Structure probing data (2A3) for a 207-nucleotide construct. The RNA was probed in 150 mM KOAc, 10 mM MgCl2 and 150 mM bicine (pH 8.5) at 24 C. Values cover nucleotides 27 to 156.
[RMDB]
RNA sequence: GGGAACGACUCGAGUAGAGUCGAAAAGAAAGAGAGUUAGACACGGUUGAUCUCACCCUUCGGGGGGGCUAUAGAGAUCACUGGAAGCACUACCGGACAAUCGGAACAUUGCAGCAAUGCAGCCCAAAAAAUCCAAACAUCUUCGGAUGUUUGGAAACUGUCGUAAGUAGUUCGCUACUUACGACAGAAAAGAAACAACAACAACAAC
Reactivity to 2A3 in 0.01 (KOAc 150mM, MgCl2 10mM, bicine 150mM(pH8.5), 24C), signal-to-noise 1, nucleotides 027 to 156: g080a030a150a000g100a000g020a010g010u080u100a090g040a030c020a020c140g050g000u050u210g010a000u000c000u000c020a040c010c010c020u040u210c190g040g000g000g000g000g010g000c010u060a040u090a220g000a000g010a000u010c010a000c000u000g020g050a060a000g030c030a010c050u050a030c020c000g000g090a100c110a050a180u130c010g020g020a100a050c020a030u050u160g030c000a010g010c010a010a170u050g000c000a010g040c020c000c030a060a110a000a000a000a000u010c000c000a000a000a000c000a000u000c000u040u050c070g080g000a000u000g010u000u000u000g010g000a000a000a000